Description
Structure probing data (2A3 and DMS) for a 177-nucleotide construct. It was measured as part of the RMDB library OK2TST. For DMS, 1,612 sequencing reads were counted. Reactivities are rounded to 0.1 and cut off at 0 and 3. For DMS the reverse transcriptase was MarathonRT. For 2A3, 934 sequencing reads were counted.
RNA sequence: GGGAACGACUCGAGUAGAGUCGAAAAAUCACUGUGGCUCCGGCACCGGCGGUCACCUCGUUGAGUAUCCGCGUGGUGGGUGUCCCAGAUGGUGUGUCCCCAGAAAUCAACGACGUGAAACUGGUGGGCACAUGUAUGCCUUCGGGCAUACAUGUGCAAAAGAAACAACAACAACAAC
Reactivity to 2A3 in 0.01 (KOAc 150mM, MgCl2 10mM, bicine 150mM(pH8.5), 24C), signal-to-noise 1, nucleotides 027 to 126: a000u030c000a000c010u000g030u050g030g020c000u030c000c000g240g030c030a000c010c000g020g040c010g000g000u030c030a040c000c030u010c040g290u080u170g020a040g040u060a060u020c020c000g030c060g060u140g000g060u040g020g040g030u000g000u030c000c010c000a010g190a130u030g000g020u020g010u040g010u000c030c000c000c010a020g090a110a090a000u080c010a000a090c070g290a040c130g070u050g070a100a010a040c000u010g000g110u190g140g020
Reactivity to DMS in 0.01 (KOAc 150mM, MgCl2 10mM, bicine 150mM(pH8.5), 24C), signal-to-noise 2, nucleotides 027 to 126: a050u000c030a090c030u000g020u000g020g010c010u000c040c040g000g030c030a020c020c010g040g010c010g000g000u000c140a160c160c060u040c070g010u000u000g000a040g000u000a160u010c030c030g000c020g020u000g060g070u000g000g010g000u000g010u000c010c020c050a100g000a080u000g010g010u000g000u000g000u010c000c000c000c040a060g030a060a070a130u000c050a060a090c110g010a130c140g000u000g010a060a090a190c050u000g010g020u010g020g010